RNA sequence: GGGAACGACUCGAGUAGAGUCGAAAAAUUACUACUGUGGCCAAAAUUUCUGACCUGAAUGAUCAAAAGUUGGCCAAGGGAGUACAUUUGCUUAGAGAUCAUGUUGUCACUCUAAUGGAAGCCAAUUUGGAUGAUAUUGUGUCCCUAGGAGAGGGAAGCUAAUAGUAGCAUUCGUGCUACUAUUAGCAAAAGAAACAACAACAACAAC
Reactivity to DMS in 0.01 (KOAc 150mM, MgCl2 10mM, bicine 150mM(pH8.5), 24C), signal-to-noise 2, nucleotides 027 to 156: a050u010u010a010c010u010a060c010u000g000u000g020g020c010c020a030a040a090a130u010u000u000c080u010g020a010c060c000u000g010a140a160u000g000a020u000c010a000a010a020a060g030u000u000g000g050c030c010a010a020g030g000g020a030g030u010a020c120a080u010u000u010g020c120u010u000a060g030a120g010a060u010c040a100u010g000u010u000g000u020c070a070c040u000c000u010a040a090u000g010g010a110a070g010c060c020a050a120u000u010u010g020g010a130u000g000a130u000a090u000u000g010u000g010u010c020c020c010u000a150g020g000a100g030a090g010g010g020a100a150
Reactivity to 2A3 in 0.01 (KOAc 150mM, MgCl2 10mM, bicine 150mM(pH8.5), 24C), signal-to-noise 4, nucleotides 027 to 156: a000u040u020a010c010u000a010c010u060g000u060g210g010c000c020a000a040a110a170u060u080u060c120u070g040a050c050c040u110g160a140a070u210g000a080u060c030a010a000a000a100g040u020u010g000g000c000c010a010a010g010g000g020a000g010u020a030c030a090u070u070u080g050c030u050u100a020g020a030g000a150u120c030a080u150g050u080u040g020u040c030a020c040u000c010u030a070a070u120g070g040a070a030g020c020c010a070a110u060u100u150g070g000a080u100g040a040u060a060u140u090g070u050g030u080c020c010c000u030a070g080g080a070g020a030g020g020g000a030a010
Source information:
An RNA of 207 nucleotides, treated with DMS and 2A3 and read out base by base. DMS (dimethyl sulfate) methylates the pairing face of unpaired adenines and cytosines. For 2A3 the reverse transcriptase was SuperScript II with manganese. The RNA was probed in 150 mM KOAc, 10 mM MgCl2 and 150 mM bicine (pH 8.5) at 24 C.